Structure probing data (DMS and 2A3) for a 207-nucleotide construct.
RNA sequence: GGGAACGACUCGAGUAGAGUCGAAAACAUAGAAGCAACGGCACUUUUGAGCUGCAGAUCCUCCCAGAUGAACUAAGUGUCAUUGAGUCAGAAACAAGAAGUCUGGCUAUACAGUUCACUGACGUGAAUAGGCAAAAGAUAAAAGUUGCUGAAAGCACUGUAAGCGAGAUUUCGAUCUCGCUUACAGAAAAGAAACAACAACAACAAC
Reactivity to DMS in 0.01 (KOAc 150mM, MgCl2 10mM, bicine 150mM(pH8.5), 24C), signal-to-noise 1, nucleotides 027 to 156: c030a210u000a130g040a110a130g040c020a110a080c060g000g010c000a070c140u000u060u000u010g020a110g000c000u010g000c100a100g000a130u000c030c020u000c060c020c010a080g010a110u000g010a050a040c060u000a090a130g050u010g030u000c130a140u000u050g000a020g000u010c000a060g000a080a060a120c000a080a250g020a070a300g000u000c000u000g030g000c000u000a060u020a050c020a110g000u000u000c000a030c010u010g000a140c150g010u030g030a050a110u000a060g010g010c000a010a060a070a010g000a150u020a070a070a100a220g000u000u000g020c000u010g000a090a060a140g010c070a100
Reactivity to 2A3 in 0.01 (KOAc 150mM, MgCl2 10mM, bicine 150mM(pH8.5), 24C), signal-to-noise 2, nucleotides 027 to 156: c040a010u210a040g070a130a040g010c020a040a000c020g040g010c070a030c060u070u060u050u080g090a050g100c020u030g050c020a060g080a260u100c010c020u060c020c040c010a030g030a220u040g000a020a000c000u060a210a000g060u000g040u200c060a080u090u240g030a000g000u000c000a000g000a040a120a090c060a270a070g080a120a010g090u010c020u020g000g000c000u000a000u020a000c030a000g010u000u000c000a000c010u030g040a030c070g030u040g030a060a060u050a040g010g000c030a030a050a040a010g070a030u110a160a050a040a020g040u080u020g000c000u010g020a030a020a020g000c010a020

For DMS, 1,794 sequencing reads were counted. Conditions: 150 mM KOAc, 10 mM MgCl2 and 150 mM bicine (pH 8.5), 24 C. Values cover nucleotides 27 to 156.